[RMDB]
RNA sequence: GGGAACGACUCGAGUAGAGUCGAAAAUGGUUAACACCGGUAGUGCUGCCAAGCAAGUGGCAAUGCGGGAGCAGCGACGAAGUGAAGGCGUGUCUGGAUAAGCGGCGCUUAGCUCUGUGAUGGCCUGAAGACCUGGCCAAUUCGUUGGCCAGGUCUUAAAAGAAACAACAACAACAAC
Reactivity to DMS in 0.01 (KOAc 150mM, MgCl2 10mM, bicine 150mM(pH8.5), 24C), signal-to-noise 1, nucleotides 027 to 126: u000g010g000u020u000a120a090c010a080c080c000g000g020u010a070g040u050g000c010u000g000c000c000a090a080g060c120a110a080g020u000g070g000c100a080a080u000g000c080g000g030g010a020g070c000a130g020c000g000a080c030g000a120a030g050u020g050a210a040g000g010c000g000u000g030u040c040u010g000g000a040u000a020a220g010c020g000g000c070g020c090u000u000a120g000c010u000c010u010g000u000g000a070u020g050g050c020c030u010g000
Reactivity to 2A3 in 0.01 (KOAc 150mM, MgCl2 10mM, bicine 150mM(pH8.5), 24C), signal-to-noise 1, nucleotides 027 to 126: u150g000g000u040u040a220a000c000a000c000c000g040g080u000a000g000u030g050c080u000g000c010c000a000a150g030c000a000a000g120u020g130g190c030a050a080u090g000c000g000g000g070a300g010c000a000g050c000g000a050c000g040a090a030g000u080g170a090a000g000g150c060g090u000g050u000c110u090g120g000a060u090a030a160g060c000g000g020c000g000c040u050u030a030g050c000u040c000u000g000u000g000a130u130g000g000c000c000u000g000